[RMDB]
RNA sequence: GGGAACGACUCGAGUAGAGUCGAAAACUGGGGACGAACCCGCCUCCGGGCGCUCCCCUCGGACCUCCGUCGAGGGGGUUCACAUCCCCAACCCGCGGGCCGGCUACUCUUCUUUCCCUUCUCUCGUACGGGGUCUCGUUCGCGAGACCCAAAAGAAACAACAACAACAAC
Reactivity to 2A3 in 0.01 (KOAc 150mM, MgCl2 10mM, bicine 150mM(pH8.5), 24C), signal-to-noise 3, nucleotides 027 to 129: c070u010g000g000g000g000a000c010g020a040a050c000c000c000g130c050c020u020c020c070g000g010g000c050g000c070u060c000c000c000c020u000c020g010g010a030c030c020u140c020c050g080u120c120g110a050g010g000g000g030g030u010u010c000a010c020a010u020c000c000c000c000a080a070c000c020c000g010c030g010g010g000c000c020g030g000c010u030a010c000u000c000u070u060c010u000u010u050c000c010c000u060u030c040u040c010u000c030g020u080a080c040g000
Reactivity to DMS in 0.01 (KOAc 150mM, MgCl2 10mM, bicine 150mM(pH8.5), 24C), signal-to-noise 2, nucleotides 027 to 129: c180u010g070g000g010g080a150c220g030a100a090c020c060c010g000c020c070u020c070c170g000g030g000c100g000c100u040c000c000c000c000u000c170g000g010a070c070c010u030c070c040g050u030c120g080a140g020g000g010g050g030u000u030c070a050c000a250u050c040c000c010c050a070a130c040c040c010g040c030g000g020g000c030c010g080g010c120u120a040c070u020c050u000u000c020u020u010u020c020c000c090u000u000c000u010c000u060c000g070u000a020c090g060
This 170-nucleotide RNA was probed chemically with 2A3 and DMS. For 2A3, 4,474 sequencing reads were counted. Reactivities are given for positions 27 through 129. For DMS the reverse transcriptase was MarathonRT.